Source: RMDB library TTRDES, as collected in RNAgym. The record gives the reactivity of an RNA of 177 nucleotides to 2A3 and DMS. For DMS, 1,444 sequencing reads were counted. In probing experiments dimethyl sulfate is read out at A N1 and C N3, which are open when not base-paired. The RNA was probed in 150 mM KOAc, 10 mM MgCl2 and 150 mM bicine (pH 8.5) at 24 C. Reactivities are given for positions 27 through 126.
RNA sequence: GGGAACGACUCGAGUAGAGUCGAAAAGAUAUGGAAUCCAUGUGGGAGUCGCUGAUCGGAAACGAUCAGGCGACAUCGAUCACAGGAUUCCUAAGUCAAAGCAGAGGGCAGUUCGCUGCCCUCUGCACAUCGAGUUACACUUCGGUGUAACUCGAUGAAAAGAAACAACAACAACAAC
Reactivity to 2A3 in 0.01 (KOAc 150mM, MgCl2 10mM, bicine 150mM(pH8.5), 24C), signal-to-noise 1, nucleotides 027 to 126: g000a000u050a030u050g000g060a000a000u000c080c210a300u070g020u000g050g110g240a300g010u000c000g000c000u040g030a000u010c000g000g050a000a000a000c020g010a000u000c030a020g100g160c010g000a010c000a010u150c170g090a090u010c010a000c000a020g000g000a000u000u000c010c000u010a030a010g000u000c020a150a190a040g020c010a000g000a050g000g020g050c000a000g000u130u270c300g110c160u000g010c000c000c030u020c000u000g000c020a010
Reactivity to DMS in 0.01 (KOAc 150mM, MgCl2 10mM, bicine 150mM(pH8.5), 24C), signal-to-noise 1, nucleotides 027 to 126: g000a020u000a070u010g000g010a000a020u000c000c010a110u000g030u000g000g000g020a140g040u000c000g010c000u010g020a000u000c010g000g000a050a000a050c000g000a010u000c000a010g070g020c000g010a020c000a070u010c300g010a150u000c000a010c010a060g000g000a030u000u020c010c000u000a010a060g000u010c010a130a110a140g000c000a000g000a040g050g000g010c000a000g000u010u020c280g040c000u010g000c000c000c000u000c000u000g010c000a040